Notes
The data come from the RNA Mapping Database (RMDB), library OK1LIB. Structure probing data (DMS and 2A3) for a 177-nucleotide construct.

[RMDB]
RNA sequence: GGGAACGACUCGAGUAGAGUCGAAAACAAAGGACUGGAUCAAUGCUCAGAUGUAAAGGGACCAUAUCCUCCUUAUUUGGGAUCAAAAACAUCAGAAACAACAUCACUAAUACAACCAUGGGAUAAGGUUCCUGUAUUUCUUCGGAAAUACAGGAACAAAAGAAACAACAACAACAAC
Reactivity to DMS in 0.01 (KOAc 150mM, MgCl2 10mM, bicine 150mM(pH8.5), 24C), signal-to-noise 2, nucleotides 027 to 126: c010a020a110a110g080g030a080c010u000g060g000a000u000c070a140a030u060g000c070u000c040a030g020a060u030g010u030a020a080a080g030g000g000a080c000c000a060u030a100u020c050c000u000c050c020u010u020a040u000u020u000g000g000g000a100u010c030a090a030a050a090a030c110a050u020c120a060g000a090a070a050c070a070a070c150a060u010c020a000c070u020a080a020u040a050c210a080a070c140c020a050u050g000g000g000a060u020a050a070g000
Reactivity to 2A3 in 0.01 (KOAc 150mM, MgCl2 10mM, bicine 150mM(pH8.5), 24C), signal-to-noise 4, nucleotides 027 to 126: c080a050a110a000g050g020a010c080u070g010g020a050u040c070a090a100u160g000c040u040c040a010g030a120u020g100u170a020a130a090g070g010g000a020c040c000a020u040a030u170c030c030u030c020c010u110u090a160u060u140u070g040g010g040a040u110c080a010a050a070a010a000c030a050u150c070a020g120a020a130a000c140a020a080c020a050u110c030a000c130u060a090a090u130a150c100a110a080c080c070a030u100g040g000g090a060u040a180a080g130
Source information:
2A3 adducts were read by reverse transcription with SuperScript II with manganese.